[RMDB]
RNA sequence: GGGAACGACUCGAGUAGAGUCGAAAACCGUAGGUACGGUUGGAGCUUGGAUUUAUACAGGACCACAUUCGAAAGAGUGUGGUGAACCUGUAUUGUCAGCUCCAAACGUACCUAAACGGAAAAGCCAUUGGAACUACUUCGGUAGUUCCAAUGGCAACACAUGAACGUGCUUCGGCACGUUCAUGUGAAAAGAAACAACAACAACAAC
Reactivity to 2A3 in 0.01 (KOAc 150mM, MgCl2 10mM, bicine 150mM(pH8.5), 24C), signal-to-noise 1, nucleotides 027 to 156: c000c000g000u010a010g010g010u000a000c000g000g050u010u000g000g000a000g000c020u100u160g130g020a050u180u300u040a000u020a000c000a000g020g020a060c000c000a020c010a000u000u030c020g050a130a150a080g010a000g000u010g000u020g030g000u000g010a000a040c020c000u000g000u000a000u000u000g000u000c020a000g000c000u000c000c000a000a000a000c000g000u000a000c000c000u010a000a010a000c010g060g020a100a100a160a000g050c000c020a000u030u000g000g000a010a000c000u020a000c070u090u190c300g080g000u010a000g010u000u010c000c000a000a000u000g000g000c010a010a000